[RMDB]
RNA sequence: GGGAACGACUCGAGUAGAGUCGAAAAGAAGUGGCAGGGACAUGCCCCAUAAGCUCGUUCUAGCAACAUAUGUUUGGCUAGUUCGAGCGAUUAGUCUAGAGGAGCGUCCUCUCGCCUAUUCACGAGACCCAUACGUCGGUUUCGACCGACGUAUGGGAAAAGAAACAACAACAACAAC
Reactivity to 2A3 in 0.01 (KOAc 150mM, MgCl2 10mM, bicine 150mM(pH8.5), 24C), signal-to-noise 3, nucleotides 027 to 126: g010a040a020g030u060g040g000c000a000g000g030g000a010c050a050u240g030c010c030c000c000a090u070a050a000g010c000u010c010g000u000u000c010u000a000g060c030a010a060c030a060u300a150u300g170u120u030u140g180g030c010u000a010g010u000u000c000g000a000g000c000g000a010u000u030a050g060u060c090u120a050g010a110g160g000a120g000c030g010u000c000c000u120c020u050c010g010c010c010u010a090u020u030c020a010c090g090a070g100a100
Reactivity to DMS in 0.01 (KOAc 150mM, MgCl2 10mM, bicine 150mM(pH8.5), 24C), signal-to-noise 1, nucleotides 027 to 126: g020a060a000g030u000g040g070c000a080g110g000g000a000c000a110u070g130c000c000c090c000a140u040a090a070g120c000u010c000g010u000u000c000u000a000g010c000a050a000c000a300u110a120u050g000u040u050u050g010g020c010u000a000g000u000u000c000g000a000g000c050g000a010u050u000a050g040u000c160u000a060g000a060g040g070a130g070c190g000u000c000c000u120c090u000c140g040c000c000u000a180u000u030c080a100c150g000a120g010a170